[RMDB]
RNA sequence: GGGAACGACUCGAGUAGAGUCGAAAAAGGAGGGAACACUUCGAGGUCAUGAAGGAUGGGGUCAUCCUCGCCAACGCCGGCCACUUCGACGUCGAGAUAAGCAAGCCCGACCUUGAGGCCCUGGCGGCGUGCCAUCAGUGUUCGCACUGAUGGCACGAAAAGAAACAACAACAACAAC
Reactivity to 2A3 in 0.01 (KOAc 150mM, MgCl2 10mM, bicine 150mM(pH8.5), 24C), signal-to-noise 2, nucleotides 027 to 126: a000g090g020a080g000g020g040a080a040c030a040c100u060u020c060g010a050g080g010u060c070a090u170g110a080a040g030g030a050u090g030g000g020g000u080c060a080u040c000c000u030c050g060c020c030a060a000c030g000c010c030g100g000c010c040a030c030u040u070c020g060a070c010g020u020c000g000a050g010a150u100a160a050g150c070a130a000g050c010c010c030g010a110c030c030u000u020g010a030g030g020c000c010c090u050g020g020c000g030g060
Reactivity to DMS in 0.01 (KOAc 150mM, MgCl2 10mM, bicine 150mM(pH8.5), 24C), signal-to-noise 2, nucleotides 027 to 126: a080g020g000a300g000g010g000a060a080c110a160c090u020u000c030g000a090g030g020u000c090a110u000g020a020a050g000g000a130u000g010g000g010g000u000c090a070u000c010c020u000c030g000c110c070a100a130c070g000c020c020g050g000c070c100a140c080u000u000c020g010a020c180g010u000c040g000a030g020a050u020a060a080g000c180a100a110g000c030c000c000g000a040c000c020u000u010g010a070g000g000c090c110c050u000g020g010c020g000g000
This 177-nucleotide RNA was probed chemically with 2A3 and DMS. The 2A3 profile rests on 1,491 reads. For DMS the reverse transcriptase was MarathonRT. 2A3 adducts were read by reverse transcription with SuperScript II with manganese. The reactions ran in a buffer of 150 mM KOAc, 10 mM MgCl2 and 150 mM bicine (pH 8.5), at 24 C. Source: RMDB library OK2TST, as collected in RNAgym.